[RMDB]
RNA sequence: GGGAACGACUCGAGUAGAGUCGAAAAGAGCGUCGAGAGACGAAGAGAAGUGCACCGAUCAGCAAGGGCGAACGUAAUGGUGCACAAGAGUAAGUCAGUGUAACGUUCUCGGGGCACUGGAGGCAGAGCUGCCUCGAUGAUUCGUCAUCGAGGCAGCAAAAGAAACAACAACAACAAC
Reactivity to DMS in 0.01 (KOAc 150mM, MgCl2 10mM, bicine 150mM(pH8.5), 24C), signal-to-noise 2, nucleotides 027 to 126: g040a090g000c000g000u040c060g000a200g000a250g000a010c050g000a050a070g000a090g110a140a120g000u000g000c030a000c020c030g020a100u050c150a180g090c090a170a110g000g000g020c000g000a070a030c070g000u060a110a050u000g050g000u010g000c050a000c010a030a100g000a060g000u080a060a140g020u020c000a110g000u000g000u000a120a090c020g030u020u000c010u000c000g010g000g000g020c020a000c000u000g000g000a060g000g000c070a240g000a140
Reactivity to 2A3 in 0.01 (KOAc 150mM, MgCl2 10mM, bicine 150mM(pH8.5), 24C), signal-to-noise 1, nucleotides 027 to 126: g100a000g000c020g090u000c050g010a000g000a000g000a010c010g010a090a010g060a000g010a300a090g000u000g000c010a010c030c000g050a080u170c000a000g020c010a090a210g080g120g000c000g010a100a000c020g010u110a070a100u190g070g000u040g010c000a000c000a000a000g040a040g120u140a160a020g050u040c040a020g000u020g080u150a090a070c050g020u020u000c050u020c030g000g000g040g000c010a010c010u000g080g000a020g010g010c020a010g050a040